[RMDB]
RNA sequence: GGGAACGACUCGAGUAGAGUCGAAAAAAAAAGAAGAUAGCGAAAGCUAGAAAAGAUCCGUGGCUAAACAGGAAACUGAAGAGAGCUGCUCGGCUGAGAAGCCGUGGCACGGAAGCAGCUCAAAAAAGUAUUCAUAUGGAUUCGUCCAUAUGAAUACAAAAGAAACAACAACAACAAC
Reactivity to DMS in 0.01 (KOAc 150mM, MgCl2 10mM, bicine 150mM(pH8.5), 24C), signal-to-noise 3, nucleotides 027 to 126: a020a050a040a040a070g010a170a090g010a150u000a000g020c010g010a090a070a160g020c010u010a020g010a120a090a130a120g000a040u010c010c010g020u000g000g020c060u010a050a050a070c090a040g010g000a070a100a090c100u000g010a080a110g010a110g000a000g010c000u000g010c010u000c000g010g010c000u000g000a170g000a110a040g020c000c020g030u000g010g000c010a020c020g000g010a050a030g010c010a000g040c010u000c000a000a030a030a060a020a020
Reactivity to 2A3 in 0.01 (KOAc 150mM, MgCl2 10mM, bicine 150mM(pH8.5), 24C), signal-to-noise 1, nucleotides 027 to 126: a000a000a000a010a000g100a040a040g030a050u060a020g000c000g040a220a010a030g000c010u020a000g120a020a090a020a010g040a000u000c000c000g030u010g070g000c140u080a050a040a050c040a030g010g130a120a080a020c060u120g050a180a000g270a060g010a000g130c000u000g000c010u000c010g000g020c000u050g030a010g000a070a020g000c000c030g000u010g070g010c000a000c010g000g030a010a010g000c030a000g000c000u010c040a080a030a000a000a000a000

Conditions: 150 mM KOAc, 10 mM MgCl2 and 150 mM bicine (pH 8.5), 24 C. Chemical mapping of a 177-nucleotide RNA with DMS and 2A3.